The record gives the reactivity of an RNA of 177 nucleotides to 2A3 and DMS. 2A3 adducts were read by reverse transcription with SuperScript II with manganese. The RNA was probed in 150 mM KOAc, 10 mM MgCl2 and 150 mM bicine (pH 8.5) at 24 C. Reactivities are given for positions 27 through 126.
RNA sequence: GGGAACGACUCGAGUAGAGUCGAAAAUACGUGACCUUCGGGUCACGUAACCGGCGUUCCCAAGUGAAAAAGAGAGACGCAAUCUCGACAGCGGCCUUUUCGUAUGAGUUGCUUUCGAGCAACUCAAUGAUUAAGUCGCAUUCGUGCGACUUAAUCAAAAAGAAACAACAACAACAAC
Reactivity to 2A3 in 0.01 (KOAc 150mM, MgCl2 10mM, bicine 150mM(pH8.5), 24C), signal-to-noise 2, nucleotides 027 to 126: u040a010c000g000u000g000a000c000c000u000u010c250g090g000g000u000c000a000c000g000u020a000a000c010c010g030g000c010g000u010u020c010c010c010a000a010g300u170g100a130a100a000a050a030g070a000g000a000g000a020c020g000c010a030a080u050c050u030c130g040a070c040a010g000c000g040g060c000c000u010u110u060u090c060g020u050a140u180g000a000g000u000u010g000c000u050u060u180c270g050a020g000c000a000a010c000u000c000a000a020
Reactivity to DMS in 0.01 (KOAc 150mM, MgCl2 10mM, bicine 150mM(pH8.5), 24C), signal-to-noise 3, nucleotides 027 to 126: u000a000c000g010u010g000a020c000c000u010u040c190g010g010g010u000c000a000c000g020u000a010a080c140c020g000g000c030g000u000u000c000c000c010a150a150g020u020g010a040a050a050a080a050g010a190g010a040g010a070c040g000c100a100a160u000c060u000c040g000a050c160a160g000c010g030g000c060c010u000u010u010u000c040g020u010a140u010g000a010g010u000u000g020c000u000u020u000c180g000a010g030c010a000a020c000u000c000a010a050